[RMDB]
RNA sequence: GGGAACGACUCGAGUAGAGUCGAAAAACAACACGCUUCGGCGUGUUGUCGACGGAGGAAGCUGAGGACGCGCUUGUGCCGCAGCAGGGAAGCGCAGCGUUAAUCAGAGGUGAUUCGUCACCUCUAAAGUUUGUCUGGUAUUCGUACCAGACAAACUAAAAGAAACAACAACAACAAC
Reactivity to 2A3 in 0.01 (KOAc 150mM, MgCl2 10mM, bicine 150mM(pH8.5), 24C), signal-to-noise 2, nucleotides 027 to 126: a000c000a000a000c010a000c010g050c020u030u110c270g180g000c000g000u020g000u010u010g000u000c000g020a030c050g040g040a030g060g050a130a000g020c020u050g040a060g040g030a040c030g010c000g000c040u110u110g050u070g020c030c030g030c010a060g030c040a030g030g030g020a040a030g000c020g000c010a010g000c020g020u020u070a060a030u060c050a000g000a010g040g040u060g010a040u060u010c060g010u010c060a010c010c020u000c000u010a030a050
Reactivity to DMS in 0.01 (KOAc 150mM, MgCl2 10mM, bicine 150mM(pH8.5), 24C), signal-to-noise 3, nucleotides 027 to 126: a010c000a020a010c000a010c000g010c000u000u010c130g020g010c000g010u020g000u000u000g010u000c030g020a080c100g020g000a070g020g000a090a090g020c050u010g000a040g000g010a080c110g010c060g040c050u000u020g010u000g000c060c030g020c080a050g010c070a070g000g000g010a100a080g000c060g010c020a060g000c070g000u000u010a100a120u010c130a010g000a020g010g030u010g010a070u010u010c130g010u000c000a050c020c000u000c010u010a000a040
Source: RMDB library M2PK50, as collected in RNAgym. Chemical mapping of a 177-nucleotide RNA with 2A3 and DMS. For DMS the reverse transcriptase was MarathonRT. The reactions ran in a buffer of 150 mM KOAc, 10 mM MgCl2 and 150 mM bicine (pH 8.5), at 24 C. 2A3 adducts were read by reverse transcription with SuperScript II with manganese.